[RMDB]
RNA sequence: GGGAACGACUCGAGUAGAGUCGAAAAGAUAUGGACAGCGCGAUGAUCCUAUGAAGUCGGAAACGAUGGAGGAUAUCGAACUACGCUGUCCUAAGUCAAAACCACGGUGACUUCGGUCACCGUGGAACUUCCCUGAAAUCUUCGGAUUUCAGGGAAGAAAAGAAACAACAACAACAAC
Reactivity to DMS in 0.01 (KOAc 150mM, MgCl2 10mM, bicine 150mM(pH8.5), 24C), signal-to-noise 1, nucleotides 027 to 126: g010a110u010a300u010g000g010a040c030a010g000c010g060c000g030a010u020g000a010u000c010c000u000a170u010g020a140a200g010u000c000g000g000a120a140a200c000g000a030u000g000g000a010g010g040a000u000a010u030c050g020a030a230c150u010a240c050g000c000u000g010u000c000c010u010a000a050g000u000c010a090a080a090a270c010c030a000c000g020g000u000g000a010c010u010u030c240g010g000u000c000a000c020c000g000u000g000g010a000a060
Reactivity to 2A3 in 0.01 (KOAc 150mM, MgCl2 10mM, bicine 150mM(pH8.5), 24C), signal-to-noise 2, nucleotides 027 to 126: g010a020u070a020u210g020g000a000c000a000g000c020g000c000g080a020u290g120a010u040c000c010u280a300u270g060a010a010g000u000c010g010g030a060a070a040c020g000a000u000g010g030a010g000g000a010u000a010u010c010g040a070a120c080u150a040c170g020c000u000g000u000c000c000u000a000a000g030u000c000a030a020a050a100c000c000a000c000g000g000u000g000a020c000u120u100c300g040g020u010c000a010c000c010g010u000g000g000a000a010